[RMDB]
RNA sequence: GGGAACGACUCGAGUAGAGUCGAAAAAUCCGCGCCUGCAAGACUAUGUUCAGGAGCGUCUUGCUGGGACGGUCCGAGAUGAAAACGGGGUCGUCAUGGCGGGGCCUGAUACGCCUGCGUGGAAGGGCGGAUGCUAAUUUUUCGAAAUUAGCAUCCGAAAAGAAACAACAACAACAAC
Reactivity to DMS in 0.01 (KOAc 150mM, MgCl2 10mM, bicine 150mM(pH8.5), 24C), signal-to-noise 5, nucleotides 027 to 126: a070u000c000c000g030c020g010c010c010u000g000c020a030a030g000a030c030u010a110u010g010u000u000c130a090g000g000a090g010c130g010u000c000u000u000g000c020u010g000g000g000a020c000g000g000u000c010c010g010a140g020a120u010g010a090a050a120a150c100g010g000g010g010u000c010g010u000c020a050u000g000g000c000g000g000g010g010c010c010u000g000a090u010a090c110g010c010c000u000g010c010g020u010g010g010a070a100g000g000g010
Reactivity to 2A3 in 0.01 (KOAc 150mM, MgCl2 10mM, bicine 150mM(pH8.5), 24C), signal-to-noise 4, nucleotides 027 to 126: a000u000c000c000g010c020g000c000c000u040g000c010a020a010g000a020c020u080a050u300g100u110u130c050a050g050g050a060g120c030g040u000c010u000u030g000c020u030g010g050g010a010c010g000g000u000c010c010g160a170g020a190u300g090a080a090a050a060c030g020g000g000g030u050c010g000u020c000a030u070g010g000c000g000g010g020g010c000c000u020g000a040u020a190c030g000c010c010u010g010c010g020u040g020g030a050a040g060g040g020